[RMDB]
Description
An RNA of 177 nucleotides, treated with 2A3 and DMS and read out base by base. For DMS, 4,918 sequencing reads were counted. DMS adducts were read by reverse transcription with MarathonRT. It was measured as part of the RMDB library TTRDEL. For 2A3, 4,949 sequencing reads were counted.
RNA sequence: GGGAACGACUCGAGUAGAGUCGAAAAGAUAUGGAGUGGCAAGCUAGCGUCUCUCGGAAACGAGAACGCUUGGACCUUGCACUCCUAAGUCAAAAGCUUGCAGAUCUCUUCGGAGAUCUGCAAGCAACUUAGUAGGGUAGUUCGCUACCCUACUAAGAAAAGAAACAACAACAACAAC
Reactivity to 2A3 in 0.01 (KOAc 150mM, MgCl2 10mM, bicine 150mM(pH8.5), 24C), signal-to-noise 2, nucleotides 027 to 126: g020a010u050a030u140g020g010a010g010u150g160g240c010a010a010g030c030u060a010g010c020g020u010c040u000c000u000c300g030g020a080a100a020c020g010a010g000a010a000c010g010c020u020u070g010g010a000c000c040u010u000g020c000a000c000u010c000c000u010a070a010g030u020c020a000a070a140a160g000c000u020u020g050c000a010g000a000u000c010u000c040u140u300c300g070g000a000g000a000u010c020u000g000c000a000a000g000c010a000a000
Reactivity to DMS in 0.01 (KOAc 150mM, MgCl2 10mM, bicine 150mM(pH8.5), 24C), signal-to-noise 4, nucleotides 027 to 126: g000a040u000a300u000g000g010a010g020u000g010g020c000a010a000g000c030u000a020g010c010g000u000c200u000c000u000c010g000g000a110a060a170c000g020a010g000a040a010c000g000c010u000u010g020g000a090c300c010u000u000g000c000a030c010u000c000c000u000a010a070g010u010c040a110a100a130a130g010c000u010u000g000c010a000g020a010u000c000u000c000u000u020c200g010g000a010g000a000u000c000u000g010c000a000a000g010c000a010a010